Chemical mapping of a 177-nucleotide RNA with 2A3 and DMS.
DMS (dimethyl sulfate) methylates the pairing face of unpaired adenines and cytosines.
The reactions ran in a buffer of 150 mM KOAc, 10 mM MgCl2 and 150 mM bicine (pH 8.5), at 24 C.
DMS adducts were read by reverse transcription with MarathonRT.
Source: RMDB library OK1LIB, as collected in RNAgym.
The 2A3 profile rests on 23,043 reads.
2A3 adducts were read by reverse transcription with SuperScript II with manganese.
For DMS, 15,041 sequencing reads were counted.
[RMDB]
RNA sequence: GGGAACGACUCGAGUAGAGUCGAAAAGCACCCCGUGACUCUGUUCCCACCGCCACCUUCGGUGGUGGAUGCGCUUUCAGGUCCACCAAUAGGCUAGCUGUUUUCGAGCGGUGUAUUUGCGUGGGGGGUUAAGAGUCCUUUUCGAAGGACUCUUAACAAAAGAAACAACAACAACAAC
Reactivity to 2A3 in 0.01 (KOAc 150mM, MgCl2 10mM, bicine 150mM(pH8.5), 24C), signal-to-noise 9, nucleotides 027 to 126: g050c040a140c010c010c000c010g130u070g030a020c020u000c020u190g020u020u020c000c000c010a030c010c000g000c000c000a020c000c020u260u260c210g030g000u010g000g040u010g000g000a020u100g070c080g010c030u030u070u070c030a030g000g030u000c010c000a010c010c000a030a040u040a060g100g000c010u040a150g010c010u090g090u260u130u150u250c070g090a020g000c010g000g030u070g050u060a080u030u110u110g050c090g010u030g000g010g000g000g010
Reactivity to DMS in 0.01 (KOAc 150mM, MgCl2 10mM, bicine 150mM(pH8.5), 24C), signal-to-noise 5, nucleotides 027 to 126: g010c070a140c010c000c000c000g010u010g010a050c020u020c020u000g010u000u000c000c010c010a290c030c010g000c010c010a020c010c000u030u020c200g010g060u010g000g010u000g000g010a040u020g020c150g020c050u000u010u010c040a030g010g000u000c030c040a040c040c010a080a050u020a040g000g010c020u000a070g030c020u000g000u020u010u030u020c160g000a060g010c030g010g010u010g000u010a030u020u010u020g010c110g030u010g010g010g000g000g010